[RMDB]
RNA sequence: GGGAACGACUCGAGUAGAGUCGAAAAGAUAUGGAAGCCGCGACGUUCGAGCACUUAUACGAGUCGUGAUCGGAAACGAUCAUACGACGAUGAGUAUAAGUGCUCGAACGUCGGGCUUCCUAAGUCAGAUACGUACAGCGUUCGCGCUGUACGUAUCAAAAGAAACAACAACAACAAC
Reactivity to DMS in 0.01 (KOAc 150mM, MgCl2 10mM, bicine 150mM(pH8.5), 24C), signal-to-noise 1, nucleotides 027 to 126: g010a050u010a300u020g000g000a020a010g050c000c010g040c030g000a010c000g000u010u000c000g030a020g000c000a010c000u010u000a020u000a000c010g040a300g020u000c010g030u020g000a010u000c000g000g010a070a120a300c030g010a000u000c020a170u020a210c240g030a070c010g010a050u010g000a300g000u000a000u010a000a020g030u000g030c000u010c000g000a000a000c000g000u000c000g030g000g010c000u000u000c000c000u020a010a070g000u020c070a110
Record summary
Chemical mapping of a 177-nucleotide RNA with DMS. The data come from the RNA Mapping Database (RMDB), library TTRINS. Conditions: 150 mM KOAc, 10 mM MgCl2 and 150 mM bicine (pH 8.5), 24 C.